[RMDB]
RNA sequence: GGGAACGACUCGAGUAGAGUCGAAAAGGUAUAUCGACAUUAAAGAAGUGAUUACAAGUCUUAAUGCUAAAAUGAUUCGUAGACACCCACACAUAUUUGGUGAUGCCAAUGCUGAAACUAUCGAUGAAUGAACAGGACAAUUCGUUGUCCUGUUCAUAAAAGAAACAACAACAACAAC
Reactivity to 2A3 in 0.01 (KOAc 150mM, MgCl2 10mM, bicine 150mM(pH8.5), 24C), signal-to-noise 5, nucleotides 027 to 126: g100g000u110a130u010a030u150c030g040a010c010a030u040u110a090a090a050g060a080a030g060u060g120a100u120u270a090c060a120a070g040u000c010u040u080a040a020u090g070c110u100a060a020a070a100u120g040a060u090u020c030g020u030a010g030a010c030a040c040c020c000a030c000a000c010a020u090a160u110u040u130g080g000u080g080a060u130g030c000c000a050a050u080g030c060u060g020a040a070a090c060u070a080u190c040g070a100u120g090a060
Reactivity to DMS in 0.01 (KOAc 150mM, MgCl2 10mM, bicine 150mM(pH8.5), 24C), signal-to-noise 4, nucleotides 027 to 126: g020g020u030a010u060a050u010c030g020a080c040a050u000u010a040a120a080g030a110a070g020u000g000a150u020u010a050c240a050a090g010u000c030u010u010a080a040u010g010c060u020a070a070a060a060u010g010a070u010u010c030g010u020a080g010a060c090a150c000c010c010a100c170a060c090a060u030a050u020u020u010g030g020u010g010a060u040g020c020c050a050a010u010g000c030u030g010a070a030a070c090u010a060u010c060g010a050u020g000a080
Chemical mapping of a 177-nucleotide RNA with 2A3 and DMS. Conditions: 150 mM KOAc, 10 mM MgCl2 and 150 mM bicine (pH 8.5), 24 C.